[RMDB]
RNA sequence: GGGAACGACUCGAGUAGAGUCGAAAAGCUCCUUCAGGUGAACGAUCUCGGUUGUUUCUCUGAAGGCAUGAUCACCCCGUCCGAUGCGGAAGUUCGUGCUUCCGUCGAACGCGAAAGUCCGACGGCGAAAACGAGUUACCGUUCGCGGUAACUCGAAUACAGUGUAAUCGUUCGCGAUUACACUGUAAAAAGAAACAACAACAACAAC
Reactivity to 2A3 in 0.01 (KOAc 150mM, MgCl2 10mM, bicine 150mM(pH8.5), 24C), signal-to-noise 4, nucleotides 027 to 156: g030c040u010c020c000u000u000c000a030g050g030u130g070a020a000c010g010a040u020c040u080c230g150g020u010u010g010u010u130u010c030u000c010u020g000a000a010g010g000c030a130u130g020a030u080c050a110c010c000c010c000g040u060c030c010g070a140u170g120c010g000g010a000a030g050u030u110c060g030u090g020c120u030u020c020c010g100u090c160g020a020a010c020g000c010g040a070a000a000g080u000c020c000g000a000c000g010g000c000g000a060a060a010a070c010g000a000g000u000u000a010c010c020g000u040u080c300g010c000g070g000u010a000a000c000u000c000g000a000a000
Reactivity to DMS in 0.01 (KOAc 150mM, MgCl2 10mM, bicine 150mM(pH8.5), 24C), signal-to-noise 2, nucleotides 027 to 156: g010c090u000c000c000u000u000c000a040g040g010u010g000a030a020c010g000a040u000c040u000c240g030g020u000u010g040u000u000u000c030u000c000u000g010a050a030g020g030c060a020u000g020a080u010c060a200c010c020c000c030g030u000c010c100g000a130u020g030c030g020g000a060a210g020u000u010c040g030u000g000c040u000u000c010c130g040u000c100g020a020a020c020g010c030g010a080a070a200g010u000c010c000g000a090c000g020g010c060g000a090a050a130a200c020g010a040g020u000u010a000c010c010g040u000u010c290g040c020g000g020u000a000a010c000u010c010g000a020a080
The record gives the reactivity of an RNA of 207 nucleotides to 2A3 and DMS. High DMS reactivity at an A or C suggests that its Watson-Crick edge is free. The DMS profile rests on 5,950 reads. The RNA was probed in 150 mM KOAc, 10 mM MgCl2 and 150 mM bicine (pH 8.5) at 24 C. For 2A3 the reverse transcriptase was SuperScript II with manganese.